An RNA of 177 nucleotides, treated with DMS and read out base by base. The DMS profile rests on 1,291 reads. The reactions ran in a buffer of 150 mM KOAc, 10 mM MgCl2 and 150 mM bicine (pH 8.5), at 24 C. Source: RMDB library OK2TST, as collected in RNAgym.
RNA sequence: GGGAACGACUCGAGUAGAGUCGAAAAGCAGGCAGAAAUGGCGAUAUUCUGGAGCGAGGUUCUUAAGCAAUCGUCCUUGCUUGACCCAACAUUAAUGCUGUUGGCCUUUGUGUUUUUGCUAAUUGGACCUACCGGAUCGAUUCGUCGAUCCGGUAGGAAAAGAAACAACAACAACAAC
Reactivity to DMS in 0.01 (KOAc 150mM, MgCl2 10mM, bicine 150mM(pH8.5), 24C), signal-to-noise 1, nucleotides 027 to 126: g040c020a040g000g010c050a030g010a070a060a050u000g040g020c030g030a070u010a130u000u020c060u010g040g000a060g010c040g030a120g000g020u000u000c020u010u000a040a120g000c160a070a090u000c120g020u000c070c060u000u000g010c010u000u000g000a100c140c030c010a030a030c090a060u010u000a050a100u020g020c170u000g010u010u000g000g000c020c030u000u020u000g000u000g020u000u020u000u000u000g000c020u010a040a170u000u020g020g000a240